[RMDB]
RNA sequence: GGGAACGACUCGAGUAGAGUCGAAAACUGUUUACGUCAAACAGACCUAAAAUCGCUCAUUGCAUACUCCUCAGUCAGCCAUAUAGCACUCGUCAUUGCAGCCAUCCUCAUCCAAACCCCCUGAAGCUGUACCGUAGGUCUUCGGACCUACGGUACAAAAAGAAACAACAACAACAAC
Reactivity to DMS in 0.01 (KOAc 150mM, MgCl2 10mM, bicine 150mM(pH8.5), 24C), signal-to-noise 1, nucleotides 027 to 126: c070u000g000u000u000u000a130c130g020u030c220a040a040a000c010a000g000a260c030c020u020a030a060a060a070u030c000g000c010u030c100a070u010u040g000c070a090u000a000c070u000c010c060u000c190a060g040u020c250a130g000c030c030a110u020a050u070a020g020c030a040c040u000c000g070u000c130a000u010u130g030c040a030g000c080c000a200u000c030c030u010c030a070u000c020c010a060a050a160c010c030c000c000c040u010g010a100a070g000c170
Reactivity to 2A3 in 0.01 (KOAc 150mM, MgCl2 10mM, bicine 150mM(pH8.5), 24C), signal-to-noise 3, nucleotides 027 to 126: c000u000g030u030u030u080a200c200g090u150c120a060a030a000c010a030g030a040c010c010u090a090a110a030a110u110c050g010c030u050c000a050u030u190g000c010a030u030a130c010u010c030c020u040c030a040g100u020c030a020g050c020c060a050u090a050u060a170g050c000a010c020u050c020g030u020c040a060u100u080g000c010a000g010c010c010a040u060c000c010u020c020a050u000c040c030a080a030a110c010c010c000c000c000u030g020a040a000g080c040